An RNA of 177 nucleotides, treated with 2A3 and DMS and read out base by base. It was measured as part of the RMDB library TTRDEL.
RNA sequence: GGGAACGACUCGAGUAGAGUCGAAAAGAUAUGGAUAGCGAGGAUCUAUGGGUGCGAUGAAAUCGGAAACGAUGGAGCACAGUAGGGAGCUAUCCUAAGUCAAAAGUGGACUGUUCGCAGUCCACAACUAAGUUGGGUUGUUCGCAACCCAACUUAGAAAAGAAACAACAACAACAAC
Reactivity to 2A3 in 0.01 (KOAc 150mM, MgCl2 10mM, bicine 150mM(pH8.5), 24C), signal-to-noise 1, nucleotides 027 to 126: g030a020u090a040u180g000g000a000u000a000g000c020g070a300g030g020a010u030c020u010a000u060g300g230g000u000g010c070g130a300u050g000a030a010a020u020c000g000g010a030a000a070c040g020a020u010g000g010a000g000c030a000c010a010g010u000a000g000g030g010a000g000c000u000a000u010c000c000u000a070a000g020u010c030a010a000a050a210g010u000g000g000a000c000u000g040u030u150c300g000c140a000g000u000c000c000a000c020a000a000
Reactivity to DMS in 0.01 (KOAc 150mM, MgCl2 10mM, bicine 150mM(pH8.5), 24C), signal-to-noise 2, nucleotides 027 to 126: g000a050u000a300u000g000g030a000u000a010g010c000g030a120g050g000a050u000c010u010a010u000g020g020g010u000g000c010g000a140u010g020a070a090a010u000c000g000g000a080a120a210c000g010a030u000g000g000a090g010c010a020c010a300g010u010a000g000g000g000a060g010c010u000a010u000c000c000u000a020a070g000u000c040a060a060a060a170g010u000g000g000a000c000u000g000u000u010c200g000c000a020g000u000c000c000a010c000a000a080